[RMDB]
RNA sequence: GGGAACGACUCGAGUAGAGUCGAAAAAGCUUGAAGAGGAGCGAAUUGUAUCAAUUCUCCAAUGGGACCGAGCAGAGCUACCAGAAUACAGAUUGGAGGCUAUUUGUGCAGCAAUGAUUGAAUCAUGGUUCACAGCAUGGUUCGCCAUGCUGUGAACAAAAGAAACAACAACAACAAC
Reactivity to 2A3 in 0.01 (KOAc 150mM, MgCl2 10mM, bicine 150mM(pH8.5), 24C), signal-to-noise 2, nucleotides 027 to 126: a000g000c000u130u150g000a100a120g110a160g300g000a000g110c060g080a000a010u170u020g150u090a090u300c050a000a050u000u000c000u000c000c000a070a120u070g000g000g010a010c000c000g000a030g060c000a090g000a000g040c000u070a230c000c000a030g000a250a000u290a300c000a000g110a090u050u120g010g010a000g000g000c000u070a050u000u170u090g000u000g000c080a000g010c070a120a260u010g090a160u150u300g050a010a010u100c080a090u140g060
Reactivity to DMS in 0.01 (KOAc 150mM, MgCl2 10mM, bicine 150mM(pH8.5), 24C), signal-to-noise 1, nucleotides 027 to 126: a000g050c000u000u000g000a200a120g010a240g000g000a040g070c000g050a000a080u000u000g000u000a160u010c020a020a080u000u000c040u000c000c130a000a130u030g000g040g000a070c000c000g010a130g030c050a050g050a010g000c060u040a090c110c130a040g000a020a170u020a060c200a090g000a020u060u000g000g000a300g000g010c110u000a000u000u000u000g000u000g000c150a010g000c130a000a020u050g000a110u000u060g000a000a020u000c000a040u000g050